[RMDB]
RNA sequence: GGGAACGACUCGAGUAGAGUCGAAAAACCUAGACUUUGCUAGGCGUGGCAGAAGUGGGCUAAGGAAGCAGUCAGGAAAGGCUUCCCAGAGAGUGUGGAGCUUGAGCUGUACCAUGAAGGACAAAGUGCAGUUGGCCAGCUGGACAAGGGAAGGGAACAUUUAGGGGUUCUUCGGAACCCCUAAAUGAAAAGAAACAACAACAACAAC
Reactivity to 2A3 in 0.01 (KOAc 150mM, MgCl2 10mM, bicine 150mM(pH8.5), 24C), signal-to-noise 1, nucleotides 027 to 156: a000c040c000u040a040g010a100c030u030u110u160g020c000u020a020g000g040c020g040u010g010g030c000a000g020a080a020g120u240g070g020g000c020u020a020a030g010g000a020a000g010c020a000g030u070c030a000g020g080a070a030a010g020g010c000u030u020c000c060c000a020g060a010g000a030g200u110g080u080g090g010a000g000c020u030u070g010a010g020c020u000g010u030a040c030c030a060u130g080a020a060g050g020a030c030a070a070a010g010u000g030c020a010g000u070u030g000g020c000c020a040g030c030u020g000g020a050c050a080a070g030g010g030a000a010g040g000g000a060a000
Structure probing data (2A3) for a 207-nucleotide construct. Conditions: 150 mM KOAc, 10 mM MgCl2 and 150 mM bicine (pH 8.5), 24 C. Source: RMDB library OK3TST, as collected in RNAgym. For 2A3, 933 sequencing reads were counted.